The record gives the reactivity of an RNA of 177 nucleotides to DMS. For DMS the reverse transcriptase was MarathonRT. It was measured as part of the RMDB library TTRINS. Conditions: 150 mM KOAc, 10 mM MgCl2 and 150 mM bicine (pH 8.5), 24 C.
RNA sequence: GGGAACGACUCGAGUAGAGUCGAAAAGAUAUGGAAUGUAGCAGGGUCGUUAUCUUUUGACGCACUCGCUUUCGGAAACGAAAGAAAUGUGCGAUAAGAUAACGACCCUGCUCACAUUCCUAAGUCACGAAAACGUAAUGUUCGCAUUACGUUUUCGAAAAGAAACAACAACAACAAC
Reactivity to DMS in 0.01 (KOAc 150mM, MgCl2 10mM, bicine 150mM(pH8.5), 24C), signal-to-noise 2, nucleotides 027 to 126: g020a050u000a300u010g030g000a000a000u000g010u000a020g010c010a010g000g000g020u000c000g040u010u000a010u010c000u000u010u000u000g000a240c060g000c000a020c000u000c300g020c010u010u020u000c010g000g000a190a110a250c010g000a010a000a010g000a060a120a060u000g000u010g020c000g030a090u000a050a000g000a010u000a000a000c010g010a000c000c000c000u000g000c020u000c090a010c000a010u000u010c000c010u000a050a130g000u000c060a300